This 207-nucleotide RNA was probed chemically with DMS and 2A3. The reactions ran in a buffer of 150 mM KOAc, 10 mM MgCl2 and 150 mM bicine (pH 8.5), at 24 C. Values cover nucleotides 27 to 156. Source: RMDB library OK3TST, as collected in RNAgym. The 2A3 profile rests on 4,792 reads.
RNA sequence: GGGAACGACUCGAGUAGAGUCGAAAACAGAGCUGGAGGAACUACGCGCGCUCGUGAUACGGCGAGAAGCUGAGGUGCGUGAGCUGGAGCGCCGACUGGUGUAAUCCUACGCUCUUACGCGCCUGCACUACGGCGUGACGAUGUCAUAAGUCGGUGCAGAUUAAUGUCUGUUCGCAGACAUUAAUCUAAAAGAAACAACAACAACAAC
Reactivity to DMS in 0.01 (KOAc 150mM, MgCl2 10mM, bicine 150mM(pH8.5), 24C), signal-to-noise 2, nucleotides 027 to 156: c100a090g010a120g030c000u000g000g010a100g020g010a070a080c010u000a070c060g010c010g000c050g030c040u110c030g010u000g010a150u000a090c040g030g010c020g000a110g020a100a150g020c040u020g020a180g010g040u000g020c020g040u000g000a080g050c050u000g010g020a100g020c000g010c020c100g020a070c080u000g030g040u010g020u000a130a160u000c030c000u000a050c010g000c020u000c020u010u000a060c030g010c000g030c020c000u000g010c030a010c030u000a070c070g010g010c020g030u000g010a100c020g000a130u010g010u000c030a070u000a040a120g020u000c030g010g000u000g010c070
Reactivity to 2A3 in 0.01 (KOAc 150mM, MgCl2 10mM, bicine 150mM(pH8.5), 24C), signal-to-noise 5, nucleotides 027 to 156: c050a010g040a010g050c040u060g000g050a030g040g040a060a050c050u110a060c100g020c000g010c010g010c050u060c030g010u040g020a090u120a190c050g030g000c020g030a090g040a130a040g030c050u100g040a020g000g030u030g000c010g000u020g010a000g000c000u020g020g000a040g030c010g010c020c000g200a230c160u240g000g000u010g020u040a050a090u010c010c000u040a040c090g000c000u000c000u010u050a020c010g010c000g000c000c000u020g010c040a030c040u140a070c040g020g000c010g010u010g030a050c030g100a090u170g010u030c020a060u080a170a040g030u030c010g010g010u020g030c030